Description: The record gives the reactivity of an RNA of 207 nucleotides to 2A3. Source: RMDB library OK3TST, as collected in RNAgym.

RNA sequence: GGGAACGACUCGAGUAGAGUCGAAAACUCAUGGUAAAGGAGGUUUAGGUAGGGGCCAGACUUUGGCGAGCUGUCAGUGGGAGACAUGCCUGCCCACAAGAGUAGAUCAGGAUAGCACGGUGGAUUAGAGCAACACGUGUGACAUUGAUAACACCAAAGGCGGUCACUAGUUCGCUAGUGACCGCCUAAAAGAAACAACAACAACAAC
Reactivity to 2A3 in 0.01 (KOAc 150mM, MgCl2 10mM, bicine 150mM(pH8.5), 24C), signal-to-noise 1, nucleotides 027 to 156: c030u030c030a120u190g050g060u130a040a040a000g050g010a000g050g060u140u140u090a080g010g040u090a040g020g000g020g000c020c000a060g040a130c050u060u030u240g070g000c020g000a020g030c040u030g000u100c050a000g000u000g050g050g000a070g000a000c050a060u070g040c000c000u130g000c050c000c000a040c060a090a000g060a000g000u160a000g000a020u070c010a000g000g000a070u070a070g050c070a000c020g160g070u030g020g010a050u000u110a080g040a030g040c000a000a000c000a000c100g000u000g040u040g040a000c030a000u000u180g070a120u150a130a070c070a040c030c010a130a080